[RMDB]
RNA sequence: GGGAACGACUCGAGUAGAGUCGAAAAACAGAAAAAAGGAGUUUAAAUUAGAUUUGCAAACGGACGGUACUAAAUACCGUCACUUUUACGUCUAACUUAUCGUUAACUCUGCAAAAAGAAGACAAGAAAAACAAGCGUGAGUUCGCUCACGCUUGAACACUCCAAUUACGUUCGCGUAAUUGGAGUGAAAAGAAACAACAACAACAAC
Reactivity to DMS in 0.01 (KOAc 150mM, MgCl2 10mM, bicine 150mM(pH8.5), 24C), signal-to-noise 1, nucleotides 027 to 156: a090c080a150g000a010a100a100a160a090a150g050g010a080g050u000u030u010a030a000a050u000u000a010g000a000u000u000u000g100c010a020a040a030c080g040g050a030c000g000g020u000a060c020u010a140a040a300u000a010c000c030g010u010c000a000c010u000u000u000u000a010c000g000u000c030u010a020a000c000u000u000a010u010c120g000u030u000a010a030c040u000c000u000g020c030a000a060a110a050a070g000a040a050g020a060c060a000a060g010a040a090a090a060a110c000a020a000g000c000g040u000g010a040g020u000u030c300g000c000u000c020a000c030g000c000u000u010g000a000a060
Reactivity to 2A3 in 0.01 (KOAc 150mM, MgCl2 10mM, bicine 150mM(pH8.5), 24C), signal-to-noise 2, nucleotides 027 to 156: a000c010a020g080a000a080a000a000a010a040g050g020a020g020u080u120u090a060a070a060u040u020a020g030a010u090u090u260g080c080a030a030a030c010g020g000a000c000g000g010u040a040c060u230a140a110a090u070a000c000c000g020u000c010a070c000u050u040u030u040a040c030g010u020c010u010a030a050c020u070u070a050u180c040g110u040u020a010a000c040u000c010u060g000c020a000a100a010a050a050g050a080a010g030a050c060a080a030g090a110a110a060a000a000c010a000a000g000c000g010u000g010a020g000u050u080c160g010c080u000c000a000c000g000c000u000u000g000a000a000